[RMDB]
RNA sequence: GGGAACGACUCGAGUAGAGUCGAAAAGAUAUGGAGUGGAACCUCUUUUGACGGUGUCCUCUCGGAAACGAGAGGGCACCGAUAAGAGGUCCACUCCUAAGUCAAAAGACCGCGUUCGCGCGGUCAAGAACUAAGAUCGGUUCGCCGAUCUUAGUUCAAAAGAAACAACAACAACAAC
Reactivity to DMS in 0.01 (KOAc 150mM, MgCl2 10mM, bicine 150mM(pH8.5), 24C), signal-to-noise 1, nucleotides 027 to 126: g030a040u030a300u010g000g000a020g040u000g000g000a080a080c010c000u000c000u000u010u000u010g020a140c120g030g020u020g020u010c000c000u020c000u010c000g010g010a100a090a140c000g000a030g010a010g000g010g010c020a000c000c000g030a010u010a000a010g000a020g010g000u000c000c010a000c000u000c000c000u000a020a090g000u000c010a080a120a180a210g000a010c010c010g010c010g010u000u000c270g060c020g020c030g000g000u020c000a030a030
Reactivity to 2A3 in 0.01 (KOAc 150mM, MgCl2 10mM, bicine 150mM(pH8.5), 24C), signal-to-noise 1, nucleotides 027 to 126: g010a010u070a040u170g030g000a000g000u020g000g220a300a300c010c020u110c050u080u090u120u230g300a130c020g000g000u000g020u000c030c010u000c000u090c010g020g000a110a150a050c030g000a010g020a000g010g000g000c000a000c000c000g010a000u010a000a000g010a000g010g000u010c000c000a000c000u010c000c000u030a000a010g000u000c000a070a000a110a110g000a020c040c040g030c080g000u010u030c300g140c010g000c120g200g000u000c000a000a000

This 177-nucleotide RNA was probed chemically with DMS and 2A3. In probing experiments dimethyl sulfate is read out at A N1 and C N3, which are open when not base-paired. The DMS profile rests on 1,227 reads. Source: RMDB library TTRDES, as collected in RNAgym. For 2A3 the reverse transcriptase was SuperScript II with manganese.